Chemical mapping of a 177-nucleotide RNA with 2A3 and DMS. DMS adducts were read by reverse transcription with MarathonRT. For 2A3 the reverse transcriptase was SuperScript II with manganese.
RNA sequence: GGGAACGACUCGAGUAGAGUCGAAAAGUUCAUGGUCACUAGAGUCGCAUAGCUAUUAUAAUCGUCCUAGAACUCCGGUGGAAGACUUCACCGCCUCGUCUUCGUUGUUCAGGGAUCCGACUCGUGGGCCUAGUAGGUGAUUCGUCACCUACUAGGCAAAAGAAACAACAACAACAAC
Reactivity to 2A3 in 0.01 (KOAc 150mM, MgCl2 10mM, bicine 150mM(pH8.5), 24C), signal-to-noise 1, nucleotides 027 to 126: g010u030u060c020a050u150g060g000u020c020a000c120u100a050g010a020g010u010c000g000c050a090u050a120g030c070u150a080u300u040a060u300a100a120u190c100g030u010c030c010u010a070g070a040a000c010u040c040c040g040g030u060g100g000a020a040g040a090c070u030u080c170a090c090c030g030c030c030u090c060g150u040c000u080u020c020g050u020u070g020u000u020c010a020g000g070g050a020u010c050c000g010a010c010u010c050g040u050g040g030
Reactivity to DMS in 0.01 (KOAc 150mM, MgCl2 10mM, bicine 150mM(pH8.5), 24C), signal-to-noise 3, nucleotides 027 to 126: g000u000u000c090a130u010g010g020u000c030a070c050u000a150g010a020g000u000c020g030c220a050u000a070g000c130u010a080u000u020a100u010a120a100u000c130g010u000c000c020u010a160g020a030a050c030u010c040c060g000g020u020g010g000a040a060g000a070c080u000u000c100a050c110c070g000c030c060u000c140g000u000c020u000u010c060g020u010u010g010u010u010c030a300g000g010g000a030u000c130c010g010a010c000u010c030g000u010g030g020